[RMDB]
RNA sequence: GGGAACGACUCGAGUAGAGUCGAAAAACCUUUGUGCAUCGGUAAAUGUAAGGGAGCGUGGGUCGAUCCCAUUGGGAUCGAUUCCACGCGAGGAUCUUACAUUUAAAUGAUGCACUCUGGUAAAAUCCUAGGGAUCGGUUCGCCGAUCCCUAGGAAACACCAAUGCGUAGUUCGCUACGCAUUGGUGAAAAGAAACAACAACAACAAC
Reactivity to 2A3 in 0.01 (KOAc 150mM, MgCl2 10mM, bicine 150mM(pH8.5), 24C), signal-to-noise 1, nucleotides 027 to 156: a000c010c000u000u000u020g030u010g030c000a020u010c030g060g040u060a000a000a000u000g000u010a000a010g050g000g010a020g000c010g010u000g000g000g030u000c000g000a000u010c020c020c080a140u110u300g000g000g000a000u050c000g000a000u300u040c010c000a000c000g000c010g000a010g000g010a000u000c000u000u000a010c000a000u000u000u000a030a080a070u110g000a000u000g000c000a000c000u000c000u030g000g000u020a030a030a000a200u000c010c000u000a000g060g000g030a000u000c000g010g070u080u110c250g020c100c010g000a000u000c000c000c010u000a010g020g000a010a000a000